[RMDB]
Source: RMDB library M2PK50, as collected in RNAgym.
The record gives the reactivity of an RNA of 177 nucleotides to 2A3 and DMS.
Conditions: 150 mM KOAc, 10 mM MgCl2 and 150 mM bicine (pH 8.5), 24 C.
Values cover nucleotides 27 to 126.
RNA sequence: GGGAACGACUCGAGUAGAGUCGAAAAGACCUUCAGUUCGCUGAAGGUCGAUGAUGGUAAGAGUGAUUACCAUCUGUUAAGUGAUAUGGAUAAGAUCUCUCAGUGAACGUGCUUUCGAGCACGUUAAAUAUCACUGUAACUUCGGUUACAGUGAUAUAAAAGAAACAACAACAACAAC
Reactivity to 2A3 in 0.01 (KOAc 150mM, MgCl2 10mM, bicine 150mM(pH8.5), 24C), signal-to-noise 8, nucleotides 027 to 126: g000a000c000c000u000u000c010a030g000u020u100c150g020c110u000g000a000a000g000g000u000c000g000a000u020g000a000u010g010g020u010a030a020g080a100g210u240g100a160u000u020a000c000c000a010u000c030u030g110u090u160a120a100g030u040g100a040u040a050u190g160g040a060u050a160a110g020a070u010c020u000c000u020c070a070g050u030g240a020a000c000g000u000g000c000u060u100u140c200g080a000g000c000a000c000g000u010u010a000a010
Reactivity to DMS in 0.01 (KOAc 150mM, MgCl2 10mM, bicine 150mM(pH8.5), 24C), signal-to-noise 9, nucleotides 027 to 126: g000a010c000c000u000u000c000a010g010u000u020c220g020c000u000g010a020a000g000g010u000c000g000a030u000g000a010u000g000g010u000a010a020g010a180g030u010g010a150u000u000a010c000c000a000u000c000u000g010u010u010a080a110g010u010g010a050u000a050u000g010g020a130u010a090a100g000a110u000c020u000c020u000c070a170g010u010g010a030a010c000g010u000g000c000u000u000u010c170g010a010g010c000a000c000g000u000u000a010a070